[RMDB]
Annotation: Structure probing data (2A3 and DMS) for a 177-nucleotide construct. It was measured as part of the RMDB library TTRDEL. The reactions ran in a buffer of 150 mM KOAc, 10 mM MgCl2 and 150 mM bicine (pH 8.5), at 24 C. DMS adducts were read by reverse transcription with MarathonRT.
RNA sequence: GGGAACGACUCGAGUAGAGUCGAAAAGAUAUGGAAUCAAUGUUUGGUACUACGCGUUGAAAUCGGAAACGAUGGAGCGUACUACUGAUAUUGAUUCCUAAGUCAAAGAGCGAGUUCGCUCGCUCAAGUACUUUAAGGACUUCGGUCCUUAAAGUACAAAAGAAACAACAACAACAAC
Reactivity to 2A3 in 0.01 (KOAc 150mM, MgCl2 10mM, bicine 150mM(pH8.5), 24C), signal-to-noise 4, nucleotides 027 to 126: g030a010u090a030u160g000g010a000a000u010c000a000a010u040g100u100u080u300g060g000u000a010c020u010a000c020g000c020g290u300u040g000a040a020a000u010c000g010g030a080a050a050c020g000a000u020g020g000a010g020c000g000u000a000c010u000a000c000u020g020a000u010a000u010u000g000a000u010u000c000c010u000a030a010g030u020c060a120a070a110g010a000g010c010g000a010g010u070u100c180g120c140u000c000g000c000u000c010a000a020
Reactivity to DMS in 0.01 (KOAc 150mM, MgCl2 10mM, bicine 150mM(pH8.5), 24C), signal-to-noise 4, nucleotides 027 to 126: g020a060u010a300u000g010g000a010a000u000c000a000a000u000g010u000u000u010g040g010u000a010c160u000a000c010g010c000g030u010u020g000a100a100a010u000c000g000g000a140a080a160c010g000a010u000g000g010a120g030c000g020u000a000c090u000a010c000u000g000a000u000a000u000u000g000a010u000u000c000c000u010a020a060g010u010c020a080a100a150g000a020g010c000g000a030g010u010u010c260g030c000u000c000g010c010u000c010a060a090